RNA sequence: GGGAACGACUCGAGUAGAGUCGAAAACUCUAUCCGCCGCGCGCGUUAGAAACUUGAGGAAGGCUGUCCCUAGUACGAGAGGACCGGGACGGACGAACCUCUGGUGUGCCAGUUGUUCCGCCAGGAGUAUACGAAGUGUCUUCGGACACUUCGUAUAAAAAGAAACAACAACAACAAC
Reactivity to DMS in 0.01 (KOAc 150mM, MgCl2 10mM, bicine 150mM(pH8.5), 24C), signal-to-noise 4, nucleotides 027 to 126: c060u000c010u010a050u000c050c010g000c070c140g000c120g030c080g030c100g000u010u000a090g000a180a070a020c020u000u000g000a040g000g010a120a300g000g000c010u030g000u000c000c020c000u000a020g000u010a140c030g000a250g010a210g000g000a100c180c120g000g010g000a050c020g020g030a030c030g000a080a220c000c000u020c010u000g000g010u000g040u000g020c030c020a030g000u000u000g010u000u000c000c000g000c060c060a050g010g000a080g020
Reactivity to 2A3 in 0.01 (KOAc 150mM, MgCl2 10mM, bicine 150mM(pH8.5), 24C), signal-to-noise 2, nucleotides 027 to 126: c000u010c000u020a060u060c020c020g000c030c020g070c050g000c010g000c010g060u010u040a080g090a090a090a020c030u040u070g010a020g050g020a060a040g010g020c000u020g020u010c000c000c000u020a000g030u000a000c040g010a010g000a040g130g030a000c020c000g000g000g000a000c010g010g010a000c010g030a080a190c000c000u000c000u000g000g040u070g000u020g050c010c030a040g020u060u010g000u050u000c000c030g060c040c010a090g010g030a070g080